[RMDB]
The record gives the reactivity of an RNA of 177 nucleotides to 2A3 and DMS. The data come from the RNA Mapping Database (RMDB), library OK1LIB. The RNA was probed in 150 mM KOAc, 10 mM MgCl2 and 150 mM bicine (pH 8.5) at 24 C. 2A3 adducts were read by reverse transcription with SuperScript II with manganese. Values are in units of 0.01, from 0 to 300, in steps of 10.

RNA sequence: GGGAACGACUCGAGUAGAGUCGAAAAGUACCAGCUGGUGGCCGUAUGAACUCCUCUAUGAGAUAUCAUUCACAUUUACAAACUCUGGUCAAUCAUCUGUGAAUAUGUCCUGGAUACCUAUAUAUUCCUAUGAUCAGGCGUUCGCGCCUGAUCAUAGAAAAGAAACAACAACAACAAC
Reactivity to 2A3 in 0.01 (KOAc 150mM, MgCl2 10mM, bicine 150mM(pH8.5), 24C), signal-to-noise 4, nucleotides 027 to 126: g000u000a030c000c000a050g000c020u030g030g040u040g010g020c000c000g010u090a030u110g050a070a030c020u040c040c000u030c040u040a050u130g130a080g040a090u040a070u060c060a020u060u040c020a010c020a100u120u160u210a160c120a070a210a030c090u100c070u220g050g030u070c040a020a040u080c020a010u000c060u050g010u020g090a060a000u110a080u060g030u020c030c000u010g050g010a060u080a100c020c060u080a050u000a010u010a060u260u120c000
Reactivity to DMS in 0.01 (KOAc 150mM, MgCl2 10mM, bicine 150mM(pH8.5), 24C), signal-to-noise 1, nucleotides 027 to 126: g020u000a140c100c060a090g050c130u000g000g000u000g000g040c000c160g000u000a030u000g010a090a100c240u000c080c110u060c110u050a100u070g000a130g070a020u010a040u010c070a030u040u000c060a020c070a050u020u020u000a070c150a090a090a020c090u010c000u050g000g000u000c130a000a040u000c040a000u010c010u000g000u050g000a060a080u010a060u060g000u000c010c040u020g010g000a190u040a070c010c000u020a050u100a170u000a300u070u000c020